RNA sequence: GGGAACGACUCGAGUAGAGUCGAAAAUAAUAGACAGCCCGUCAUCUGUGGAAUUCACUGUGCAGGAGCCAAAGCCGAGUACAUCAGGAAGGGUCUCAAAGAAAGUUGUGCUUCAGCAAUUUAUCGCAACUAUCAGCCUUUUCGAAGGCUGAUAGUUAAAAGAAACAACAACAACAAC
Reactivity to DMS in 0.01 (KOAc 150mM, MgCl2 10mM, bicine 150mM(pH8.5), 24C), signal-to-noise 2, nucleotides 027 to 126: u000a130a070u000a130g020a110c110a150g010c040c040c030g020u000c050a050u010c060u000g030u000g030g000a080a100u000u000c030a080c070u000g030u010g030c030a120g010g010a150g030c060c070a070a060a180g010c080c010g000a080g040u000a050c100a050u000c090a050g020g000a050a120g010g000g000u000c020u000c040a030a050a080g000a120a080a080g010u000u010g020u010g000c050u000u000c080a090g000c090a050a030u000u030u000a030u000c180g010c110
This 177-nucleotide RNA was probed chemically with DMS.
Source: RMDB library OK2TRN, as collected in RNAgym.
Conditions: 150 mM KOAc, 10 mM MgCl2 and 150 mM bicine (pH 8.5), 24 C.